The record gives the reactivity of an RNA of 207 nucleotides to 2A3.
RNA sequence: GGGAACGACUCGAGUAGAGUCGAAAAUGGUCGAUUCGUCGACCAAAAAAACCUUUGUGUAGCAUCGAUCUAUGGAACGCGUCUGUGGACCCAUUGGGUCCAUUAGACUAAGCCAUAGGGAGCUACACUCUGGUAAAAACGAUUCUUCGGAAUCGAAGGAUAAAUCUACGUUCGCGUAGAUUUAUCCAAAAGAAACAACAACAACAAC
Reactivity to 2A3 in 0.01 (KOAc 150mM, MgCl2 10mM, bicine 150mM(pH8.5), 24C), signal-to-noise 3, nucleotides 027 to 156: u050g000g000u000c010g010a010u090u050c180g060u090c000g050a060c000c110a140a010a000a050a000a000a050c020c000u020u010u010g000u000g000u000a010g000c020a270u260c070g070a040u040c000u020a010u020g000g000a150a090c050g020c060g220u000c010u000g000u000g000g000a000c010c000c160a300u130u300g010g000g030u050c000c000a000u030u200a000g000a000c010u000a040a010g000c000c000a010u000a000g000g020g000a020g000c000u000a000c000a010c010u000c000u000g020g000u070a130a010a020a020a000c020g000a020u000u000c010u040u040c180g140g010a000a020u020c020g010a070a040

For 2A3 the reverse transcriptase was SuperScript II with manganese.